[RMDB]
RNA sequence: GGGAACGACUCGAGUAGAGUCGAAAAUUAUGCAUAUUAUCAUAGAUGCAUAUUAUCAUAGCAGGAAUUGAUACAGAAGUCGGCAAGACAUUCGUUAGCGCCAUCUUAACUAUCCUAUUUCAAGCAGCCUGUCUAACGAUUUCGAUCGUUAGACAGGAAAAGAAACAACAACAACAAC
Reactivity to DMS in 0.01 (KOAc 150mM, MgCl2 10mM, bicine 150mM(pH8.5), 24C), signal-to-noise 2, nucleotides 027 to 126: u020u010a000u000g000c010a000u010a080u000u000a150u010c150a130u040a050g000a060u010g000c000a020u000a010u000u000a100u000c050a130u000a090g010c050a090g000g000a040a020u000u000g000a050u000a050c200a170g020a110a070g030u000c150g020g000c090a030a160g000a030c020a040u000u000c110g030u000u000a060g020c180g020c050c030a050u000c030u010u000a090a150c210u000a060u000c000c110u000a080u010u000u000c060a030a140g000c110a110g010
Reactivity to 2A3 in 0.01 (KOAc 150mM, MgCl2 10mM, bicine 150mM(pH8.5), 24C), signal-to-noise 2, nucleotides 027 to 126: u110u020a010u000g000c010a000u070a090u100u160a210u250c050a090u090a300g040a060u030g000c010a000u000a020u100u100a100u080c080a030u110a030g000c020a020g000g060a050a030u070u090g010a000u030a120c080a070g130a060a000g070u080c100g060g000c050a010a020g030a030c020a030u070u210c180g030u030u020a000g000c020g030c040c000a010u000c010u040u010a040a050c020u020a010u080c010c020u100a140u050u080u030c010a100a030g030c000a010g070
The data come from the RNA Mapping Database (RMDB), library OK2TRN.
The record gives the reactivity of an RNA of 177 nucleotides to DMS and 2A3.
2A3 is a SHAPE reagent: it acylates the 2'-hydroxyl of flexible nucleotides of all four kinds.
2A3 adducts were read by reverse transcription with SuperScript II with manganese.
The RNA was probed in 150 mM KOAc, 10 mM MgCl2 and 150 mM bicine (pH 8.5) at 24 C.
The DMS profile rests on 940 reads.
The 2A3 profile rests on 1,252 reads.